[RMDB]
RNA sequence: GGGAACGACUCGAGUAGAGUCGAAAAUGGACAGAGACACCGACAUGCUCUCUUCUGGGCAGAGACACUCGUUCAUGGGCAGCUACAAAGUGGCCAUCAACAGGAACACCCUCAGACUGGAGGCAGCCAACAACGUAUAAUUCGUUAUACGUUGUUGAAAAGAAACAACAACAACAAC
Reactivity to DMS in 0.01 (KOAc 150mM, MgCl2 10mM, bicine 150mM(pH8.5), 24C), signal-to-noise 9, nucleotides 027 to 126: u010g010g000a060c070a080g010a090g020a090c100a060c060c050g010a130c150a100u000g000c040u000c010u000c200u000u000c090u000g000g010g010c060a060g000a120g000a080c100a050c050u000c080g010u000u000c070a040u000g010g000g010c050a050g010c040u000a070c150a050a080a110g020u000g010g010c030c020a060u000c080a040a070c080a050g000g010a070a070c080a100c050c030c010u000c050a060g000a100c100u000g000g000a070g000g010c070a040g010c130
Reactivity to 2A3 in 0.01 (KOAc 150mM, MgCl2 10mM, bicine 150mM(pH8.5), 24C), signal-to-noise 9, nucleotides 027 to 126: u080g020g010a020c040a060g050a020g020a040c020a020c060c040g060a050c040a110u070g000c010u000c000u000c000u170u050c060u060g000g030g000c030a010g020a010g000a070c010a010c060u040c030g040u060u020c010a020u030g000g030g000c020a060g030c020u060a060c080a090a190a040g070u050g050g040c010c000a030u050c020a010a070c000a020g030g030a040a010c020a050c030c010c000u030c010a050g020a140c030u050g020g010a020g040g000c010a010g050c020